The record gives the reactivity of an RNA of 177 nucleotides to DMS and 2A3. DMS adducts were read by reverse transcription with MarathonRT. For 2A3 the reverse transcriptase was SuperScript II with manganese. Conditions: 150 mM KOAc, 10 mM MgCl2 and 150 mM bicine (pH 8.5), 24 C.

[RMDB]
RNA sequence: GGGAACGACUCGAGUAGAGUCGAAAAACAAGUUAAGAAGCUUCAAUUCUGGCGUUACGCAUAGCUGGCUGUUAGCUCUAUUCCUUACUAGUUCACGACUAACAGUUUUUGUAACCAAAACCUGAGCCCUAAUUAAAUGCUUCGGCAUUUAAUUAGGAAAAGAAACAACAACAACAAC
Reactivity to DMS in 0.01 (KOAc 150mM, MgCl2 10mM, bicine 150mM(pH8.5), 24C), signal-to-noise 3, nucleotides 027 to 126: a060c120a070a090g000u000u020a080a100g000a110a080g010c030u000u000c120a040a130u000u020c040u010g000g000c110g020u000u000a040c080g000c190a080u000a100g020c190u000g000g000c010u000g000u000u000a020g010c130u000c050u000a160u010u000c010c020u000u000a110c230u000a110g010u000u000c100a080c150g030a040c020u000a010a010c010a020g010u000u000u000u000u000g010u020a060a040c030c050a050a030a040a080c190c070u010g010a130g000c200
Reactivity to 2A3 in 0.01 (KOAc 150mM, MgCl2 10mM, bicine 150mM(pH8.5), 24C), signal-to-noise 3, nucleotides 027 to 126: a000c010a030a030g040u120u100a170a070g070a080a020g050c030u120u100c090a100a160u140u090c020u070g040g020c060g050u030u060a030c030g000c080a070u070a130g020c040u030g030g010c000u010g000u020u000a010g000c030u000c010u050a080u040u060c010c000u070u090a110c060u050a060g110u030u120c110a040c090g050a010c010u020a020a010c020a040g000u000u000u000u020u100g000u010a010a010c020c000a000a040a020a030c040c030u030g040a010g070c030